[RMDB]
RNA sequence: GGGAACGACUCGAGUAGAGUCGAAAAGACGAAUAGCUCAGUAAAACUGCGAUGAUUUAGUCUGGCUGUGUAGAUAACUACGUGAAAAUGUAGCUAAGGGAAGGCAGAAUAAGACGCAGGACUAUCACCCAUAGUCACAAUUCGUUGUGACUAUGGGAAAAGAAACAACAACAACAAC
Reactivity to 2A3 in 0.01 (KOAc 150mM, MgCl2 10mM, bicine 150mM(pH8.5), 24C), signal-to-noise 9, nucleotides 027 to 126: g070a010c060g040a080a070u060a080g020c030u040c100a050g050u120a020a080a060a050c010u010g000c010g090a140u150g030a050u080u010u120a050g030u010c000u000g110g090c030u030g030u040g060u150a030g040a130u090a080a060c010u010a000c010g040u050g070a110a050a020a030u110g000u030a000g010c060u070a040a060g080g030g040a040a030g040g000c000a000g010a040a010u050a040a010g040a010c020g000c020a000g010g020a030c030u040a050u180c040a050
Reactivity to DMS in 0.01 (KOAc 150mM, MgCl2 10mM, bicine 150mM(pH8.5), 24C), signal-to-noise 6, nucleotides 027 to 126: g000a100c070g010a080a100u000a050g000c060u000c040a120g000u050a060a080a070a250c030u010g010c010g000a090u020g000a110u030u010u000a040g020u000c000u000g010g020c010u020g020u040g030u030a080g010a090u000a060a150c000u000a000c000g030u000g000a070a040a120a010u010g000u000a000g010c030u020a090a100g010g010g000a110a100g000g000c000a020g010a040a030u010a040a100g000a120c020g000c020a030g000g010a080c030u010a070u010c080a190

An RNA of 177 nucleotides, treated with 2A3 and DMS and read out base by base. Source: RMDB libraries RFM100 and RFMREP, as collected in RNAgym. Conditions: 150 mM KOAc, 10 mM MgCl2 and 150 mM bicine (pH 8.5), 24 C.